[RMDB]
The record gives the reactivity of an RNA of 177 nucleotides to 2A3. 2A3 adducts were read by reverse transcription with SuperScript II with manganese.
RNA sequence: GGGAACGACUCGAGUAGAGUCGAAAAGAAACUUCUAUUAUUUGCAGUCAGUAACAAAGAUUCAUCCUUGUGUCUGUCAAGCAACAAGGAGAAUCUUUGUCACUUAGUGUAAUUAAUAGCUGUACAAACCCAGCAAUUUCUUCGGAAAUUGCUGGGUAAAAGAAACAACAACAACAAC
Reactivity to 2A3 in 0.01 (KOAc 150mM, MgCl2 10mM, bicine 150mM(pH8.5), 24C), signal-to-noise 2, nucleotides 027 to 126: g090a040a060a010c000u020u020c000u000a000u000u000a000u000u000u000g000c000a040g210u020c000a000g010u020a010a000c000a000a000a000g000a000u000u000c000a170u000c300c000u000u000g010u020g040u030c050u170g300u180c040a080a010g010c010a000a150c000a010a000g000g000a000g000a000a000u000c000u000u000u000g000u000c000a010c000u010u030a070g170u070g000u000a010a010u000u020a000a000u000a000g000c010u020g000u020a010c060a020a130